[RMDB]
RNA sequence: GGGAACGACUCGAGUAGAGUCGAAAAUCGAUCUGCUCCAUGGCAUUAUCCGCAGUUGGAAUGAAAAAAAUGGGUUGAACGUCUUGGCGAAAGUGGACGGUUCGCCGAACGGCAUGUGCCUUGGGCACGCUAGUACCUCGUUCGCGAGGUACUAGCGAAAAGAAACAACAACAACAAC
Reactivity to DMS in 0.01 (KOAc 150mM, MgCl2 10mM, bicine 150mM(pH8.5), 24C), signal-to-noise 3, nucleotides 027 to 126: u000c090g000a100u010c090u010g020c010u020c010c040a000u000g020g000c020a040u000u010a090u000c020c020g010c130a090g020u000u010g010g010a120a080u010g000a000a000a050a070a070a100a100u020g010g030g030u010u010g020a030a050c030g000u000c050u000u010g060g010c010g010a020a040a060g010u010g010g000a030c080g020g000u000u000c010g000c000c000g000a010a050c020g000g000c170a090u000g020u000g000c000c000u000u000g020g000g000c040a100
Reactivity to 2A3 in 0.01 (KOAc 150mM, MgCl2 10mM, bicine 150mM(pH8.5), 24C), signal-to-noise 2, nucleotides 027 to 126: u140c010g030a080u020c010u080g000c030u000c040c000a050u020g010g000c010a020u070u050a040u130c030c010g010c070a060g040u140u120g090g080a190a160u150g100a080a040a020a010a000a000a130u150g050g000g000u040u280g040a040a010c000g000u000c030u080u130g120g000c050g010a050a020a040g120u070g060g000a020c040g050g080u000u000c010g000c000c000g000a050a000c010g020g000c080a020u060g010u010g010c000c000u030u010g000g030g000c000a000